[RMDB]
RNA sequence: GGGAACGACUCGAGUAGAGUCGAAAAAUGCACUGGUUCGCCAGUGCAUGAUUACCGAGAAAGUACCUCGGUAUAAAAGUGCAACCCUUCGAAACAAGGGAAUUCCGAACCGAUUCGUCGGUUCGAAACCGACUAUGCUGUUCGCAGCAUAGUCGGUAAAAGAAACAACAACAACAAC
Reactivity to DMS in 0.01 (KOAc 150mM, MgCl2 10mM, bicine 150mM(pH8.5), 24C), signal-to-noise 2, nucleotides 027 to 126: a010u000g000c000a000c000u010g000g000u010u040c250g010c020c000a020g010u000g020c000a000u000g000a150u000u000a030c000c000g000a000g000a100a130a160g000u000a140c160c000u010c000g000g000u010a000u000a030a070a040a110g000u020g000c170a140a190c010c000c010u000u000c080g030a130a120a160c290a040a010g000g000g000a100a160u000u010c080c000g000a010a000c000c000g000a000u010u010c120g010u000c020g000g000u000u010c000g000a000a030
Reactivity to 2A3 in 0.01 (KOAc 150mM, MgCl2 10mM, bicine 150mM(pH8.5), 24C), signal-to-noise 1, nucleotides 027 to 126: a010u010g000c000a010c000u000g010g050u050u100c110g040c060c000a000g000u000g000c000a000u020g000a000u000u020a000c000c020g000a000g000a010a230a020g130u100a060c010c010u010c000g000g050u000a000u010a000a020a040a000g120u130g120c030a120a180c000c030c000u010u020c110g150a140a030a050c040a040a020g060g000g030a000a080u170u070c090c010g020a000a000c000c000g020a020u040u080c120g040u000c000g080g000u010u000c000g000a010a010